[RMDB]
RNA sequence: GGGAACGACUCGAGUAGAGUCGAAAACGCUGGCGCUGACAGGCCAUGAACUGUCACCGACGCGCAUAUGACCGCGCCCGUUGACCAGCGGAGAUUCCAGCACAAAACGUCGGCCAAUCAGCUGCUGAGUUGAAAUAGUUUUCGAACUAUUUCAACUAAAAGAAACAACAACAACAAC
Reactivity to DMS in 0.01 (KOAc 150mM, MgCl2 10mM, bicine 150mM(pH8.5), 24C), signal-to-noise 9, nucleotides 027 to 126: c030g020c040u000g010g010c030g030c190u000g000a010c020a040g000g000c060c150a160u000g010a080a070c020u000g000u000c010a060c090c040g000a050c100g000c020g020c070a150u000a110u010g000a100c210c050g010c030g010c010c030c060g010u000u010g010a110c020c030a040g010c010g010g000a120g010a170u000u000c020c010a110g010c070a080c120a050a060a100a100c120g010u000c030g010g000c030c030a070a110u010c110a080g010c050u000g010c060u010g000
Reactivity to 2A3 in 0.01 (KOAc 150mM, MgCl2 10mM, bicine 150mM(pH8.5), 24C), signal-to-noise 9, nucleotides 027 to 126: c010g000c030u020g010g000c020g000c070u010g000a000c000a020g030g010c060c050a110u150g070a120a050c010u020g000u010c000a000c010c020g030a050c020g020c000g010c050a030u120a190u300g160a130c050c080g000c010g000c000c020c030g040u070u180g090a200c020c000a000g000c010g020g000a030g010a020u090u020c010c010a040g050c070a050c040a080a140a080a020c060g050u070c020g060g000c010c010a060a160u090c030a060g030c020u070g000c020u100g050
The record gives the reactivity of an RNA of 177 nucleotides to DMS and 2A3. DMS adducts were read by reverse transcription with MarathonRT. The 2A3 profile rests on 23,546 reads. For DMS, 21,138 sequencing reads were counted. Values cover nucleotides 27 to 126. 2A3 adducts were read by reverse transcription with SuperScript II with manganese. The RNA was probed in 150 mM KOAc, 10 mM MgCl2 and 150 mM bicine (pH 8.5) at 24 C.